[RMDB]
RNA sequence: GGGAACGACUCGAGUAGAGUCGAAAAUUCGCCGAACACCGCAUCGCCAGCGCUUUCGCCAUCGCCGACCGCGGACGUCCGGCGGACUCCUGGUUGUUGGAAACCGUGCGUCUGGCCUGGAGGGUGAAACGUAUUAAUAAUUCGUUAUUAAUACGUUAAAAGAAACAACAACAACAAC
Reactivity to 2A3 in 0.01 (KOAc 150mM, MgCl2 10mM, bicine 150mM(pH8.5), 24C), signal-to-noise 5, nucleotides 027 to 126: u000u000c020g030c010c010g030a040a000c030a020c030c020g020c040a020u030c030g040c100c040a030g010c020g030c070u090u180u170c060g030c020c020a060u050c040g050c090c020g050a050c010c060g030c030g010g040a080c060g020u010c020c020g030g020c000g000g010a010c010u030c010c020u040g080g000u020u060g010u030u050g020g020a090a080a060c030c030g010u040g010c010g030u030c030u060g030g030c030c000u030g020g020a050g040g020g010u040g000a040
Reactivity to DMS in 0.01 (KOAc 150mM, MgCl2 10mM, bicine 150mM(pH8.5), 24C), signal-to-noise 9, nucleotides 027 to 126: u000u000c020g020c010c010g000a060a090c040a090c030c020g010c030a150u000c160g010c050c030a070g000c050g010c230u000u000u000c110g020c060c080a080u010c050g010c060c020g000a040c060c130g010c040g000g000a080c120g010u000c030c010g010g010c030g010g000a020c080u000c020c020u000g010g010u000u000g000u000u000g010g000a070a080a090c120c050g010u000g000c070g010u000c020u000g010g010c010c030u000g010g010a080g010g010g010u000g000a060
Annotation: Chemical mapping of a 177-nucleotide RNA with 2A3 and DMS. The RNA was probed in 150 mM KOAc, 10 mM MgCl2 and 150 mM bicine (pH 8.5) at 24 C. It was measured as part of the RMDB library OK2TST. In probing experiments dimethyl sulfate is read out at A N1 and C N3, which are open when not base-paired.